Description
This 207-nucleotide RNA was probed chemically with 2A3 and DMS. It was measured as part of the RMDB library M2RFPK. For DMS the reverse transcriptase was MarathonRT. For 2A3, 4,835 sequencing reads were counted. The RNA was probed in 150 mM KOAc, 10 mM MgCl2 and 150 mM bicine (pH 8.5) at 24 C. For DMS, 3,152 sequencing reads were counted.
RNA sequence: GGGAACGACUCGAGUAGAGUCGAAAAACGCGGACUACGCUCCGCGACAACACUUCUUUCGACCCGCUAACCGAGACCUAUGGGUCGUUAAAUUACGUCUCUAUCUUACUCACAUAACAUCGCACAAAAAACGUGGUUCGGUUCGCCGAACCACGAACUUGUACUUAUAGUUCGCUAUAAGUACAAGAAAAGAAACAACAACAACAAC
Reactivity to 2A3 in 0.01 (KOAc 150mM, MgCl2 10mM, bicine 150mM(pH8.5), 24C), signal-to-noise 6, nucleotides 027 to 156: a000c020g000c010g010g000a010c050u210a080c300g070c180u000c010c000g010c000g030a000c010a050a050c040a020c060u140u120c030u070u250u150c010g000a000c010c010c010g000c150u150a020a020c040c040g010a010g010a030c010c000u030a060u210g000g010g000u000c010g030u000u020a010a010a010u160u040a000c000g010u000c020u000c000u020a090u080c050u070u110a080c040u100c090a040c030a120u190a170a040c020a110u120c100g030c140a060c100a080a060a030a100a060a070c060g010u000g000g000u010u000c000g010g030u020u040c190g020c050c000g000a000a010c000c000a000c000g000a000a000
Reactivity to DMS in 0.01 (KOAc 150mM, MgCl2 10mM, bicine 150mM(pH8.5), 24C), signal-to-noise 2, nucleotides 027 to 156: a070c030g030c000g000g010a050c000u000a230c140g010c120u000c000c000g000c010g000a110c080a080a120c090a070c090u010u000c080u000u000u020c010g010a050c000c000c000g020c060u010a130a100c060c050g010a080g010a060c030c020u000a120u010g040g010g030u000c000g000u000u000a030a090a130u000u000a060c050g030u000c000u000c010u020a100u010c040u000u000a070c050u000c020a090c070a070u000a060a070c020a150u010c080g080c060a120c070a000a060a060a070a040a090c010g050u000g000g000u000u000c000g000g000u000u000c300g000c000c010g030a020a040c000c000a030c030g040a010a030